[RMDB]
RNA sequence: GGGAACGACUCGAGUAGAGUCGAAAACGGUUCUGAGGUGGUUUGUGUAUCCCACUCAGUUACUUCCGGUAACUUGGAGUUUGUAGCAAUGUAAGUUUCGUCCUAAAAGGACUCAUCAGGUAGCCUAGUAACAAUUAUUCUUCGGAAUAAUUGUUACAAAAGAAACAACAACAACAAC
Reactivity to 2A3 in 0.01 (KOAc 150mM, MgCl2 10mM, bicine 150mM(pH8.5), 24C), signal-to-noise 5, nucleotides 027 to 126: c030g030g030u070u000c010u030g040a060g050g080u070g040g080u020u100u110g110u040g050u100a110u060c000c000c010a000c010u020c010a000g010u040u030a030c020u100u020c060c070g030g010u020a030a020c010u030u100g100g020a050g040u080u090u100g070u080a030g020c060a090a050u080g010u090a070a070g020u040u010u130c040g000u000c000c020u120a190a180a030a030g020g000a020c000u020c030a050u020c010a010g060g010u050a020g000c000c020u020a030
Reactivity to DMS in 0.01 (KOAc 150mM, MgCl2 10mM, bicine 150mM(pH8.5), 24C), signal-to-noise 6, nucleotides 027 to 126: c130g000g020u000u000c030u010g010a080g010g020u010g010g010u000u000u000g020u000g020u010a140u000c070c020c020a090c030u000c020a040g000u000u000a020c030u000u010c140c110g000g010u000a030a030c040u000u010g020g010a060g010u000u000u010g010u000a080g010c060a070a060u000g010u000a060a070g010u000u000u000c060g000u000c030c010u010a050a070a110a180g000g000a030c010u000c050a060u000c040a050g010g000u000a070g010c040c050u000a130